[RMDB]
RNA sequence: GGGAACGACUCGAGUAGAGUCGAAAAGGAGUACUCUUCGGAGUACUCCAGCAACCGAGAAUCUUCCUCGGUAUAUAAAAGAAACCCUUGGAAACAAGGGAAAUACGGCAGGGUUCGCCCUGCCGAAACGUAUAUUAUGAUUCGUCAUAAUAUACGUAAAAGAAACAACAACAACAAC
Reactivity to DMS in 0.01 (KOAc 150mM, MgCl2 10mM, bicine 150mM(pH8.5), 24C), signal-to-noise 8, nucleotides 027 to 126: g010g000a020g010u000a000c000u000c000u000u000c190g030g000a020g000u000a000c010u000c000c000a040g010c220a160a030c000c000g000a010g000a120a160u010c160u000u010c150c000u000c000g000g000u000a010u000a020u010a020a030a030a060g010a140a110a120c010c000c000u010u000g000g000a170a120a210c000a000a010g000g010g010a030a020a060u000a120c020g000g010c000a000g000g010g010u000u010c210g010c000c000c010u000g000c000c000g010a000a040
Reactivity to 2A3 in 0.01 (KOAc 150mM, MgCl2 10mM, bicine 150mM(pH8.5), 24C), signal-to-noise 6, nucleotides 027 to 126: g000g000a020g040u070a010c010u020c020u080u120c300g010g000a010g000u000a000c000u010c000c000a000g010c010a000a010c000c010g000a000g020a040a120u080c080u150u080c100c000u010c010g000g000u010a050u010a010u030a300a030a000a010g090a060a090a030c000c000c000u000u010g020g010a050a030a020c000a000a000g010g000g020a020a020a010u040a010c000g000g010c000a010g000g000g050u050u080c130g070c030c000c000u000g000c000c000g000a000a020